[RMDB]
RNA sequence: GGGAACGACUCGAGUAGAGUCGAAAACAUUCAUGAACCUCGAGUUAGAGGCCUUUCUUCUGAAACUCAGAAUCUAGUAGGGAAGACCUGUGUAGACGAAUAAAAAUAAAUACAUCACAGCUUGUUAAGUGCUGUGACAAAGAGGCAGUGAAAUCCAUCGGAUGAUGAGUUUCGACUCAUCAUCCGAAAAAGAAACAACAACAACAAC
Reactivity to 2A3 in 0.01 (KOAc 150mM, MgCl2 10mM, bicine 150mM(pH8.5), 24C), signal-to-noise 2, nucleotides 027 to 156: c010a030u090u040c010a010u090g040a100a030c000c000u000c000g020a030g040u060u170a040g030a070g110g000c010c020u070u060u060c000u070u000c010u030g060a100a100a090c080u110c160a050g060a130a030u080c070u140a050g070u100a020g080g060g000a010a010g030a030c010c020u050g020u020g000u010a080g020a150c040g070a110a020u220a080a070a040a000a010u230a010a070a000u110a040c010a020u030c000a000c000a000g010c030u140u150g120u300u220a220a020g090u010g020c010u000g000u000g000a000c000a000a070a000g020a020g030g000c020a000g000u000g070a040a010a000u100c080c030a020